RNA sequence: GGGAACGACUCGAGUAGAGUCGAAAACUGAAGAUUCGUGUGCUUCAAACUGGUCACCGCACAUGGUUUGCGGGCAUUACGCGGUGGGUGUCGCAGGCAAGUGUGCAUCAAAACCAUGCGGAUGCGGGUAGCAUUUUGAAUUCGUUCAAAAUGCUACAAAAGAAACAACAACAACAAC
Reactivity to 2A3 in 0.01 (KOAc 150mM, MgCl2 10mM, bicine 150mM(pH8.5), 24C), signal-to-noise 9, nucleotides 027 to 126: c030u040g030a060a000g060a110u090u090c060g030u110g030u100g080c010u040u040c030a050a100a070c060u080g050g020u100c050a020c080c040g020c010a020c020a080u090g050g030u050u050u050g040c050g020g030g000c000a030u080u120a080c060g010c040g090g020u110g040g040g020u070g030u050c030g000c040a020g090g000c020a100a100g070u040g020u030g070c000a030u040c010a030a060a020a060c010c010a030u060g010c040g090g030a040u060g040c020g040g060
Reactivity to DMS in 0.01 (KOAc 150mM, MgCl2 10mM, bicine 150mM(pH8.5), 24C), signal-to-noise 9, nucleotides 027 to 126: c080u000g010a070a070g000a110u000u010c080g030u000g010u000g020c020u000u000c050a060a110a150c130u010g010g010u000c070a200c070c050g020c020a040c040a060u000g010g000u000u000u000g010c100g010g000g010c030a030u000u000a060c090g020c050g010g020u000g010g000g010u000g010u000c030g010c050a060g010g010c080a070a110g010u000g010u010g000c020a050u000c080a060a070a060a060c050c010a030u010g010c130g010g000a060u000g010c030g010g010